[RMDB]
RNA sequence: GGGAACGACUCGAGUAGAGUCGAAAAUGUCGAUAUCCAUGAUUAGACCUGCCAGCCGGCAAGAAUCAGAUGGAUGUGUCAGCGCAAUAACUCCAGGUCACAGGAAUGCAUACCGGUGCGAAACGGGAGGGAUCAGUUAAUUCGUUAACUGAUCCCUAAAAGAAACAACAACAACAAC
Reactivity to DMS in 0.01 (KOAc 150mM, MgCl2 10mM, bicine 150mM(pH8.5), 24C), signal-to-noise 7, nucleotides 027 to 126: u000g020u020c050g000a070u010a030u010c020c020a050u000g010a060u020u000a090g000a300c170c030u000g010c020c010a160g010c150c150g010g000c020a040a040g010a060a050u010c050a050g000a100u010g000g010a030u000g010u000g020u020c040a050g010c050g030c080a060a080u020a110a120c070u010c020c000a070g020g010u010c030a040c050a080g000g010a070a090u020g000c070a100u020a080c030c000g000g010u000g020c080g000a050a070a080c060g010g000g020
Reactivity to 2A3 in 0.01 (KOAc 150mM, MgCl2 10mM, bicine 150mM(pH8.5), 24C), signal-to-noise 8, nucleotides 027 to 126: u170g040u050c020g030a030u020a030u110c010c020a020u020g010a100u080u120a050g070a190c010c000u010g020c010c010a150g150c110c140g040g000c030a040a020g100a070a020u040c020a010g110a270u070g010g010a030u020g020u010g040u080c050a070g010c030g000c100a050a070u070a130a070c020u000c010c010a010g030g020u030c020a020c010a040g040g100a170a040u130g020c010a020u060a150c000c000g060g020u080g010c050g040a070a080a030c040g020g000g010
Record summary: An RNA of 177 nucleotides, treated with DMS and 2A3 and read out base by base. For DMS the reverse transcriptase was MarathonRT. The data come from the RNA Mapping Database (RMDB), library OK1LIB. The RNA was probed in 150 mM KOAc, 10 mM MgCl2 and 150 mM bicine (pH 8.5) at 24 C.